[RMDB]
RNA sequence: GGGAACGACUCGAGUAGAGUCGAAAACUACGCGUGGGUGGAGGUAAGGCUGGAUUAUGGUACUGGCGUCUUUUUCAUAGACGAGUUUAACGAUGAUGAUCUUGCGACGUCGGGCGGCUCCCACACGGACCUCGAUAACAUUCGUGUUAUCGAGGUCAAAAGAAACAACAACAACAAC
Reactivity to DMS in 0.01 (KOAc 150mM, MgCl2 10mM, bicine 150mM(pH8.5), 24C), signal-to-noise 1, nucleotides 027 to 126: c030u000a140c110g000c070g050u000g000g020g020u010g000g000a110g000g010u010a040a060g000g020c070u010g000g000a040u010u010a060u000g030g010u000a040c100u010g000g030c000g000u010c020u020u010u000u010u010c170a140u010a050g040a080c030g010a120g010u000u000u000a070a110c080g010a080u040g020a110u020g010a080u020c040u000u010g000c070g010a040c090g020u000c030g010g010g020c030g020g000c020u010c010c000c010a070c190a040c180g000
Reactivity to 2A3 in 0.01 (KOAc 150mM, MgCl2 10mM, bicine 150mM(pH8.5), 24C), signal-to-noise 1, nucleotides 027 to 126: c010u100a030c040g010c040g100u060g000g020g050u090g000g030a040g090g050u110a090a030g050g070c030u030g040g030a060u130u140a040u230g100g060u160a110c040u030g110g050c000g020u000c010u000u180u060u070u060c170a120u140a120g060a080c030g010a050g080u000u130u030a150a010c040g000a030u080g020a000u000g010a030u000c030u000u050g000c050g020a050c020g000u040c050g000g000g010c000g010g060c000u070c000c000c010a000c050a000c020g120